Structure probing data (2A3 and DMS) for a 177-nucleotide construct.

RNA sequence: GGGAACGACUCGAGUAGAGUCGAAAAGAUAUGGAGUGACGAGGGAGCUUUGUCGGAAACGACCGAGCUUUGAUCUCGCACUCCUAAGUCAAAGUCUCUCAUACGUGUUCGCACGUAUGAGAGACAAGGCUCAUCUAUACUUCGGUAUAGAUGAGCCAAAAGAAACAACAACAACAAC
Reactivity to 2A3 in 0.01 (KOAc 150mM, MgCl2 10mM, bicine 150mM(pH8.5), 24C), signal-to-noise 1, nucleotides 027 to 126: g030a010u090a070u140g010g010a010g020u010g040a300c010g000a010g040g070g000a030g020c000u040u000u040g010u020c000g070g000a090a100a080c000g000a020c020c010g000a000g030c000u170u090u040g020a040u040c010u020c010g020c000a000c000u000c000c020u010a070a000g040u030c020a120a040a060g000u000c010u040c000u020c000a010u010a000c000g010u020g090u040u110c300g020c150a000c010g000u000a000u000g000a000g000a000g000a000c000a000a010
Reactivity to DMS in 0.01 (KOAc 150mM, MgCl2 10mM, bicine 150mM(pH8.5), 24C), signal-to-noise 1, nucleotides 027 to 126: g000a040u000a300u030g000g010a010g010u000g000a120c090g020a020g000g030g020a010g000c000u000u000u000g010u030c000g000g000a080a080a160c000g010a020c020c060g000a000g010c000u000u020u020g000a050u010c010u000c050g020c000a000c020u000c000c000u000a000a120g000u030c060a130a200a130g020u000c000u000c000u000c020a060u000a010c000g010u000g010u020u020c250g010c000a020c000g000u000a000u000g000a010g030a010g030a000c000a000a010

Values cover nucleotides 27 to 126. It was measured as part of the RMDB library TTRDEL.